[RMDB]
RNA sequence: GGGAACGACUCGAGUAGAGUCGAAAAGAGCGAUUAGACAAACGGGUAGAGCUACAUAUUAGAUAGCUGUAUAAUCGUUCAAGUUACAUCAAAACAUCUUCAAUAUUUAUUACUUACUUUCCUUUCUGCCAGAGUACGGUAUUCGUACCGUACUCAACCCCAUCUAGGGAUUCGUCCCUAGAUGGGGAAAAGAAACAACAACAACAAC
Reactivity to 2A3 in 0.01 (KOAc 150mM, MgCl2 10mM, bicine 150mM(pH8.5), 24C), signal-to-noise 4, nucleotides 027 to 156: g010a000g010c010g010a000u000u010a040g040a060c050a040a230a030c110g040g060g060u120a050g020a020g060c000u020a000c020a080u290a150u280u170a090g150a300u010a000g030c010u000g000u020a050u010a010a010u000c010g000u020u000c010a000a000g020u010u100a040c060a120u130c080a060a120a100a060c040a120u050c060u190u040c080a150a140u070a260u240u150u100a160u150u140a050c010u040u020a020c010u050u080u020c020c010u060u070u090c020u050g060c050c020a070g000a000g010u000a000c000g010g010u020a010u000u040c070g010u020a010c000c010g000u000a000c000u000c000a000a000